[RMDB]
RNA sequence: GGGAACGACUCGAGUAGAGUCGAAAACGUCAAACUCAGCAACAAAUCGUUUACAAAACACCAAAACCAUUAGCUGGAUUAAAUGGUGAAAGUCAUGAUUUCACAACAACGCAUCAAUCACCAACAAUACUCCAAUGCAGUUCGCUGCAUUGGAGUAAAAAGAAACAACAACAACAAC
Reactivity to 2A3 in 0.01 (KOAc 150mM, MgCl2 10mM, bicine 150mM(pH8.5), 24C), signal-to-noise 6, nucleotides 027 to 126: c030g030u040c030a010a020a090c050u030c050a050g010c060a070a070c020a060a180a040u090c040g030u010u050u090a100c090a050a140a080a020c030a040c020c020a080a050a050a100c040c000a050u040u070a060g040c050u040g000g040a070u130u150a080a050a150u050g030g020u020g010a050a030a030g060u100c030a020u070g070a080u020u100u130c110a070c010a120a080c030a070a040c120g000c030a040u020c020a020a110u040c010a020c050c000a030a080c010a060a060
Reactivity to DMS in 0.01 (KOAc 150mM, MgCl2 10mM, bicine 150mM(pH8.5), 24C), signal-to-noise 1, nucleotides 027 to 126: c120g000u030c040a110a050a140c030u010c000a000g020c000a050a120c270a000a060a020u000c070g000u000u020u000a150c050a080a060a190a150c000a120c000c080a000a040a100a050c050c030a020u000u030a090g000c080u000g040g000a040u000u000a130a030a050u000g000g000u000g000a000a040a060g020u000c170a000u020g000a000u000u000u020c070a080c030a070a100c080a000a040c180g000c060a040u000c040a060a080u050c010a020c010c050a140a070c070a060a120